RNA sequence: GGGAACGACUCGAGUAGAGUCGAAAAAUCUUUCGCUGGGCUUACGUGAAUCCGUGAGAGGCGUUGAUCAUACUGAAGCGCGCACGGUAUGGGAGCCUCCCGGAUACUCUGUAAGCCUGUGCUGAAGCGCGCACGGCAACCGAAAGGUGCGGGAUAACUACUGUAUCCUGUUCGCAGGAUACAGUAGAAAAGAAACAACAACAACAAC
Reactivity to DMS in 0.01 (KOAc 150mM, MgCl2 10mM, bicine 150mM(pH8.5), 24C), signal-to-noise 1, nucleotides 027 to 156: a020u000c010u010u000u000c000g030c140u010g050g010g030c010u000u000a000c010g040u000g020a120a150u000c010c030g020u000g060a130g010a010g030g000c010g010u000u010g000a080u000c020a020u000a000c020u010g010a080a030g020c000g040c010g020c010a300c030g000g010u000a020u000g000g000g010a030g010c010c000u000c000c020c000g000g010a010u000a000c070u010c020u000g010u000a030a070g030c000c010u010g010u000g000c000u000g010a030a040g010c050g030c000g000c000a290c020g000g000c000a120a080c020c020g000a080a040a050g020g010u010g030c000g000g000g020a150u000a100a180
Reactivity to 2A3 in 0.01 (KOAc 150mM, MgCl2 10mM, bicine 150mM(pH8.5), 24C), signal-to-noise 4, nucleotides 027 to 156: a000u030c030u010u060u060c010g010c020u040g000g000g010c010u010u010a010c010g100u060g230a300a300u030c010c010g050u190g070a300g010a000g080g000c010g100u160u020g000a010u000c000a000u000a000c010u050g050a210a020g020c010g000c000g000c000a010c000g010g010u000a000u000g000g000g000a010g000c000c000u000c000c000c000g000g000a010u010a000c020u020c020u010g010u000a000a000g000c000c000u000g000u010g000c000u010g030a140a050g000c000g000c000g000c000a000c010g000g000c000a040a040c030c020g050a080a030a010g000g010u020g010c000g020g060g020a060u120a170a080